The record gives the reactivity of an RNA of 207 nucleotides to 2A3.
Conditions: 150 mM KOAc, 10 mM MgCl2 and 150 mM bicine (pH 8.5), 24 C.
[RMDB]
RNA sequence: GGGAACGACUCGAGUAGAGUCGAAAAGACCCUGGUUUAUUUCAUACAUAUAUUUAAUUGGGGUGCUCAUAAUUCAAUCAAAUGACAGCCACCAUGUCUCUAUCUUUUGAGAGAAGUUAGGUUGACACCAAUGUUACUUUUCUGAAUUCAGCCACUAGUAAAAUGGGUGAUUCGUCACCCAUUUUACAAAAGAAACAACAACAACAAC
Reactivity to 2A3 in 0.01 (KOAc 150mM, MgCl2 10mM, bicine 150mM(pH8.5), 24C), signal-to-noise 2, nucleotides 027 to 156: g030a060c000c000c010u010g000g040u060u020u050a060u060u050u030c040a040u100a180c020a060u300a050u150a110u160u190u110a160a040u090u010g120g000g000g000u020g000c030u040c060a000u070a270a160u290u130c090a030a170u050c050a080a180a090u060g030a070c040a020g030c090c030a030c000c000a010u010g040u000c020u040c000u060a110u040c030u000u070u100u080g170a220g010a020g000a050a000g010u010u050a000g070g140u150u050g020a040c000a010c010c000a000a000u060g040u020u120a100c110u090u090u100u030c030u010g040a030a040u030u030c000a000g140c040c060a070c050u090a000